[RMDB]
RNA sequence: GGGAACGACUCGAGUAGAGUCGAAAACGAUAAAACGGGGCGAGAGAUCCUCAAGCGGGUAGAAGAGGAUGUGCGUGAGAUUGUGGCACGUGGCGAGGCACUUAACGAGGUAAAAGAUCUCGUCUUGGUAGGUAGAAGUGUUCGCACUUCUACCUACAAAAGAAACAACAACAACAAC
Reactivity to DMS in 0.01 (KOAc 150mM, MgCl2 10mM, bicine 150mM(pH8.5), 24C), signal-to-noise 2, nucleotides 027 to 126: c050g000a180u000a060a020a120a210c100g010g000g020g050c040g010a050g000a080g000a090u000c000c020u000c030a120a110g050c100g010g010g040u010a040g020a090a060g000a080g020g000a020u000g000u000g000c060g020u020g000a060g000a130u020u000g010u040g020g010c030a010c050g010u000g020g000c050g000a070g040g000c060a030c090u000u020a110a080c070g030a010g000g010u000a060a070a070a130g000a150u000c010u000c010g000u000c070u000u000g010
Reactivity to 2A3 in 0.01 (KOAc 150mM, MgCl2 10mM, bicine 150mM(pH8.5), 24C), signal-to-noise 1, nucleotides 027 to 126: c000g020a010u130a120a130a010a030c060g010g000g020g040c020g000a030g000a030g000a090u080c010c000u030c030a060a000g010c040g010g020g060u040a020g060a200a000g030a060g030g040a080u050g040u000g060c060g000u060g010a080g020a060u140u150g040u130g080g000c000a010c080g000u030g020g010c070g000a030g050g010c010a000c030u040u040a050a010c070g010a030g120g000u080a070a100a030a000g100a040u000c000u010c000g010u030c080u000u070g070
An RNA of 177 nucleotides, treated with DMS and 2A3 and read out base by base. For DMS, 1,364 sequencing reads were counted. The 2A3 profile rests on 1,418 reads. Reactivities are given for positions 27 through 126. Conditions: 150 mM KOAc, 10 mM MgCl2 and 150 mM bicine (pH 8.5), 24 C.